[RMDB]
RNA sequence: GGGAACGACUCGAGUAGAGUCGAAAAUCGCACGUCGUGAAGAUGCUCGGUAGCGAUGGGGAGUGGCGCGAGCUGGGCACGAUCGUUCCGGGGUCGCUGAAGUACACGAGUGAUGAGCGCGGAUACGCGUACCACUGUAAUUCGUUACAGUGGUACGAAAAGAAACAACAACAACAAC
Reactivity to DMS in 0.01 (KOAc 150mM, MgCl2 10mM, bicine 150mM(pH8.5), 24C), signal-to-noise 9, nucleotides 027 to 126: u000c050g020c040a100c060g010u000c030g020u000g010a140a110g010a080u010g010c030u000c020g010g010u010a100g010c020g010a050u000g010g010g010g010a100g020u000g010g010c040g020c140g010a110g010c020u000g000g000g010c040a080c040g000a040u000c030g010u000u000c020c010g010g000g000g010u000c040g010c100u000g010a070a090g010u000a100c110a060c050g000a070g010u000g000a070u000g000a110g010c060g010c040g010g000a120u010a070c170g010
Reactivity to 2A3 in 0.01 (KOAc 150mM, MgCl2 10mM, bicine 150mM(pH8.5), 24C), signal-to-noise 9, nucleotides 027 to 126: u070c020g000c030a030c040g180u060c010g010u050g070a060a040g070a090u110g110c010u010c020g020g060u110a020g010c010g030a050u070g030g010g020g010a130g090u120g030g000c020g000c020g040a030g010c020u040g000g080g000c050a020c060g050a040u040c020g020u050u000c010c010g010g000g000g020u030c020g000c100u110g040a070a010g050u050a030c050a010c060g030a030g030u060g040a170u100g030a040g040c070g000c040g040g040a080u080a140c080g000